Source: RMDB library OK2TST, as collected in RNAgym. An RNA of 177 nucleotides, treated with DMS and 2A3 and read out base by base. The 2A3 profile rests on 2,338 reads. Reactivities are given for positions 27 through 126. 2A3 adducts were read by reverse transcription with SuperScript II with manganese. Reactivities are rounded to 0.1 and cut off at 0 and 3.
[RMDB]
RNA sequence: GGGAACGACUCGAGUAGAGUCGAAAAUUUUGUUUUCCAGCGUGAUUGGUUCCAACAGCAAGAUUUUGUUCAACCGCGAUCCGGCGCAGCGGGUGGAAGCGGUGGCGCCUUGGUUGACGACUGACAACCUUUUAAUAUUAUUCGUAAUAUUAAAAGGAAAAGAAACAACAACAACAAC
Reactivity to DMS in 0.01 (KOAc 150mM, MgCl2 10mM, bicine 150mM(pH8.5), 24C), signal-to-noise 7, nucleotides 027 to 126: u000u010u000u010g000u000u000u000u000c020c020a090g020c110g020u000g010a080u010u010g010g010u000u000c050c040a090a120c140a070g020c080a060a060g000a090u000u000u000u000g010u010u000c050a060a060c020c010g020c080g010a070u010c090c260g000g000c030g030c040a090g010c050g010g020g020u000g000g010a090a140g010c030g010g020u010g000g020c030g020c040c040u010u010g010g010u000u000g010a060c040g010a090c100u000g010a090c120a060a150
Reactivity to 2A3 in 0.01 (KOAc 150mM, MgCl2 10mM, bicine 150mM(pH8.5), 24C), signal-to-noise 2, nucleotides 027 to 126: u010u030u040u090g030u020u110u040u000c020c000a010g050c070g100u110g070a190u080u110g000g000u070u030c060c020a070a030c030a080g050c030a080a010g020a150u080u140u090u120g050u080u040c010a030a030c020c020g040c020g050a030u040c050c030g040g000c050g000c030a020g070c020g020g070g010u080g040g030a090a040g100c070g100g060u020g030g000c000g040c030c000u030u060g010g000u020u020g020a040c010g020a040c010u060g060a050c000a020a030